[RMDB]
RNA sequence: GGGAACGACUCGAGUAGAGUCGAAAAGAAGAUGUUAACUCAGCACAUCCAGCAGCCAGAGGGUUUACAAAGGGCUCAGUCCCUUCGGGGAGGCUUCUGGUGAAGGAGGAUCGCUAGAACCAAGCUGAAGGCUUGGGUGUUUCGACACCCAAGCCUUAAAAGAAACAACAACAACAAC
Reactivity to DMS in 0.01 (KOAc 150mM, MgCl2 10mM, bicine 150mM(pH8.5), 24C), signal-to-noise 1, nucleotides 027 to 126: g000a100a090g000a100u040g010u000u020a030a090c110u000c050a040g000c060a060c090a080u000c000c010a030g000c210a300g020c010c010a060g000a000g010g000g010u000u000u000a040c050a040a020a020g000g030g000c020u000c300a110g020u010c040c000c000u000u000c080g000g010g000g030a070g020g020c060u000u000c000u000g010g000u000g010a100a180g020g010a080g000g020a070u010c100g010c020u030a030g000a050a110c060c070a040a180g000c040u010g010
Chemical mapping of a 177-nucleotide RNA with DMS. DMS (dimethyl sulfate) methylates the pairing face of unpaired adenines and cytosines. For DMS the reverse transcriptase was MarathonRT. Reactivities are rounded to 0.1 and cut off at 0 and 3. The RNA was probed in 150 mM KOAc, 10 mM MgCl2 and 150 mM bicine (pH 8.5) at 24 C.